An RNA of 177 nucleotides, treated with 2A3 and DMS and read out base by base.
Source: RMDB library OK1LIB, as collected in RNAgym.
For DMS the reverse transcriptase was MarathonRT.
Conditions: 150 mM KOAc, 10 mM MgCl2 and 150 mM bicine (pH 8.5), 24 C.
For 2A3, 1,505 sequencing reads were counted.
Reactivities are given for positions 27 through 126.
RNA sequence: GGGAACGACUCGAGUAGAGUCGAAAAGCAAUCUGUCCGCCGGUCAGCUGCAGUUGCUCGCAUUGGCCAGGGCGCGUCUGGUUGACCUCGACAUUCUGCUGCUGGAUGAGGCCACCGUGGCCCUGGACUCGGACGGAAAAUUCGUUUUCCGUCCGAGAAAAGAAACAACAACAACAAC
Reactivity to 2A3 in 0.01 (KOAc 150mM, MgCl2 10mM, bicine 150mM(pH8.5), 24C), signal-to-noise 3, nucleotides 027 to 126: g000c030a010a060u080c020u020g050u060c020c050g030c030c050g120g030u090c020a050g020c010u070g040c020a020g020u090u050g010c020u040c050g090c070a120u110u270g070g000c000c020a010g000g010g010c140g030c030g090u130c130u120g040g000u170u040g150a300c000c000u020c030g010a050c010a110u130u000c030u130g130c020u050g000c050u080g080g070a240u140g000a040g000g000c030c000a000c010c010g010u030g080g020c000c000c000u000g000g000a000
Reactivity to DMS in 0.01 (KOAc 150mM, MgCl2 10mM, bicine 150mM(pH8.5), 24C), signal-to-noise 1, nucleotides 027 to 126: g030c020a060a040u030c040u000g000u010c080c010g010c020c050g050g000u000c100a060g080c070u010g000c030a070g000u000u000g000c050u010c030g000c140a200u010u010g000g020c030c000a020g020g000g000c040g100c060g000u000c060u010g000g000u040u000g000a070c020c000u010c020g030a250c050a070u000u010c030u000g000c060u030g070c080u010g040g000a060u010g000a070g000g000c000c000a000c100c000g000u020g000g000c010c010c000u000g000g000a220